[RMDB]
RNA sequence: GGGAACGACUCGAGUAGAGUCGAAAAACGAUGACGUCGCCCGGGCCGAUGGCUCGGUCGAACCGGCUGUCCCCCAGCACGUAUGACACCAGAUUGAGUGACUCGGUGGCGUUCUUGGUGAACACCACAUCAGGAUGAGGUUCGCCUCAUCCUGAUGAAAAGAAACAACAACAACAAC
Reactivity to DMS in 0.01 (KOAc 150mM, MgCl2 10mM, bicine 150mM(pH8.5), 24C), signal-to-noise 3, nucleotides 027 to 126: a060c130g000a110u010g000a060c070g000u000c030g000c160c010c010g000g000g030c000c020g010a150u050g000g000c010u000c000g000g010u000c010g010a050a120c140c040g000g000c040u000g000u030c000c030c000c020c030a090g000c060a090c090g000u020a050u000g000a130c020a060c010c010a120g000a100u000u020g000a100g030u010g000a080c010u000c060g010g030u000g010g010c070g010u000u010c010u000u000g020g000u030g000a070a040c060a100c040c040a090
Reactivity to 2A3 in 0.01 (KOAc 150mM, MgCl2 10mM, bicine 150mM(pH8.5), 24C), signal-to-noise 6, nucleotides 027 to 126: a020c090g050a090u130g050a020c060g060u030c010g030c000c000c000g010g000g010c010c000g300a230u300g030g000c010u010c020g000g010u010c010g010a020a030c060c010g030g000c020u040g040u060c030c000c000c000c000a000g040c010a010c050g050u100a060u210g070a030c020a020c000c000a030g070a120u130u160g080a110g110u150g050a090c010u020c050g050g000u020g020g000c020g010u030u020c010u020u090g060g000u090g070a050a040c130a040c040c000a020

Source information:
Conditions: 150 mM KOAc, 10 mM MgCl2 and 150 mM bicine (pH 8.5), 24 C. An RNA of 177 nucleotides, treated with DMS and 2A3 and read out base by base. The 2A3 profile rests on 5,084 reads. The DMS profile rests on 6,784 reads. 2A3 adducts were read by reverse transcription with SuperScript II with manganese.